[RMDB]
RNA sequence: GGGAACGACUCGAGUAGAGUCGAAAAGUGAUAGACGUAUUAAAAUGCACCGACUAAGAACGUAGAACGAACUAUAGAAUGUUAUACAAUGGGUGAUGAUAAGUAGAAGAUGUUACCCGAUAUACCCAUAGCAUUAUCUAGUUAUGGCAUGUGUGUAGCACUACCCAUAUUUCGAUAUGGGUAGUGCAAAAGAAACAACAACAACAAC
Reactivity to 2A3 in 0.01 (KOAc 150mM, MgCl2 10mM, bicine 150mM(pH8.5), 24C), signal-to-noise 3, nucleotides 027 to 156: g050u060g030a050u070a050g060a020c070g050u020a130u090u220a180a050a010a050u110g010c040a020c030c000g120a050c090u070a080a110g030a130a050c020g070u040a040g000a120a030c090g040a030a010c030u020a030u020a140g040a050a010u060g000u020u050a070u000a100c090a130a090u100g030g000g000u060g020a090u010g030a020u030a130a090g080u130a050g030a100a030g040a060u150g010u020u020a020c030c030c000g020a010u050a020u040a160c030c030c000a000u000a010g020c000a000u060u130a090u210c080u050a040g050u060u010a030u080g060g000c050a090u060g050u000g030u000g000u010a020
Reactivity to DMS in 0.01 (KOAc 150mM, MgCl2 10mM, bicine 150mM(pH8.5), 24C), signal-to-noise 2, nucleotides 027 to 156: g000u000g000a070u000a080g000a050c020g030u010a130u010u000a030a050a120a140u000g050c040a140c050c000g010a190c040u000a080a110g000a040a140c090g010u000a090g000a080a120c030g000a040a080c070u000a100u020a170g010a070a050u000g010u000u000a100u000a110c100a070a100u000g000g040g030u000g030a070u010g020a060u020a030a100g000u000a090g000a070a210g000a110u000g010u000u000a080c030c000c000g010a100u010a040u010a070c110c030c000a110u000a000g000c000a090u000u010a080u010c090u000a080g000u000u000a050u000g010g020c090a050u010g030u010g020u000g010u020a230
The record gives the reactivity of an RNA of 207 nucleotides to 2A3 and DMS.
2A3 adducts were read by reverse transcription with SuperScript II with manganese.
2A3 is a SHAPE reagent: it acylates the 2'-hydroxyl of flexible nucleotides of all four kinds.
The 2A3 profile rests on 1,350 reads.